[RMDB]
RNA sequence: GGGAACGACUCGAGUAGAGUCGAAAAGGGGUCACCCUAAGACAGAGCAAGACAUGCUCCCAUACUGAAGCCUCCACGGUAUGUUGGAGCAACAGCUUGCUUCGAGGGUGACGGAGGCACCCAAAGUAGACCGAGGGGUUCGCCCCUCGGUCUACAAGUGUAUACACAACUUCGGUUGUGUAUACACAAAAGAAACAACAACAACAAC
Reactivity to 2A3 in 0.01 (KOAc 150mM, MgCl2 10mM, bicine 150mM(pH8.5), 24C), signal-to-noise 1, nucleotides 027 to 156: g100g020g060g020u030c010a020c020c000c010u050a140a020g010a030c020a030g010a000g000c010a000a010g020a120c010a220u220g010c010u000c030c010c010a000u000a000c010u030g030a140a000g010c010c040u000c000c000a000c020g000g000u000a010u010g120u170u180g000g010a000g060c020a020a040c020a020g020c000u000u000g010c000u000u030c010g000a020g040g000g000u010g010a000c010g000g000a010g000g020c010a040c020c000c010a080a070a010g010u010a010g000a000c000c000g010a000g000g020g050g010u070u140c250g080c000c000c000c010u000c020g010g020u010c000u000a000c000a000a000
Chemical mapping of a 207-nucleotide RNA with 2A3. 2A3 adducts were read by reverse transcription with SuperScript II with manganese. Conditions: 150 mM KOAc, 10 mM MgCl2 and 150 mM bicine (pH 8.5), 24 C. Source: RMDB library RNAMAK, as collected in RNAgym.